[RMDB]
RNA sequence: GGGAACGACUCGAGUAGAGUCGAAAAUCAACACCUACACAAGGCAUGUGGAAGAGUUUGAGCUUGCUUUGAUCCUGCAGCUCUGUAUUGUCCCCCUGUCGUCUGAUGUCCUCAGCCACCUACAGUCAAUGAACCCCUCUAUUUUGGAGGGCUGGAAGUCUAGUUACGCAUUCGUGCGUAACUAGACAAAAGAAACAACAACAACAAC
Reactivity to 2A3 in 0.01 (KOAc 150mM, MgCl2 10mM, bicine 150mM(pH8.5), 24C), signal-to-noise 1, nucleotides 027 to 156: u080c000a000a230c000a060c040c000u150a030c160a010c040a230a000g040g000c040a040u020g070u040g100g080a020a000g010a060g120u130u300u050g040a040g000c040u190u140g000c050u080u120u100g020a030u090c070c040u130g010c000a000g010c000u040c000u030g000u030a110u160u300g150u090c030c020c000c000c020u000g040u020c050g010u040c020u000g010a000u110g020u060c070c000u020c010a050g000c000c000a020c030c030u000a000c010a040g040u090c050a180a100u190g050a210a140c000c060c000c040u000c000u060a150u060u240u040u040g010g000a030g000g000g000c000u000g000g000a050a050
This 207-nucleotide RNA was probed chemically with 2A3. Reactivities are given for positions 27 through 156. The RNA was probed in 150 mM KOAc, 10 mM MgCl2 and 150 mM bicine (pH 8.5) at 24 C.